[RMDB]
Structure probing data (DMS) for a 177-nucleotide construct.
Source: RMDB library OK2TRN, as collected in RNAgym.
The reactions ran in a buffer of 150 mM KOAc, 10 mM MgCl2 and 150 mM bicine (pH 8.5), at 24 C.
RNA sequence: GGGAACGACUCGAGUAGAGUCGAAAAGGGCCCGGGAACUCCGGCCUCGAAUUGUGGCCUCUAAGUUGCAUGUUUGGCAGCCCAUGUGCCGGACACCGCGGGACAGACAGACCCCAGGUGGGCGGGGUCCCAAUUUAACUUUCGAGUUAAAUUGGGAAAAAGAAACAACAACAACAAC
Reactivity to DMS in 0.01 (KOAc 150mM, MgCl2 10mM, bicine 150mM(pH8.5), 24C), signal-to-noise 3, nucleotides 027 to 126: g010g010g020c080c040c000g020g000g020a100a300c230u000c100c070g000g020c030c050u010c080g000a080a090u010u000g020u000g010g010c030c040u010c100u010a080a100g000u000u000g010c040a120u010g000u000u000u000g020g000c020a110g020c030c020c020a060u010g010u010g010c010c000g000g000a050c100a100c170c060g010c090g020g000g010a070c050a110g010a140c130a160g000a130c030c000c000c050a100g010g020u010g000g000g000c080g000g000g000g000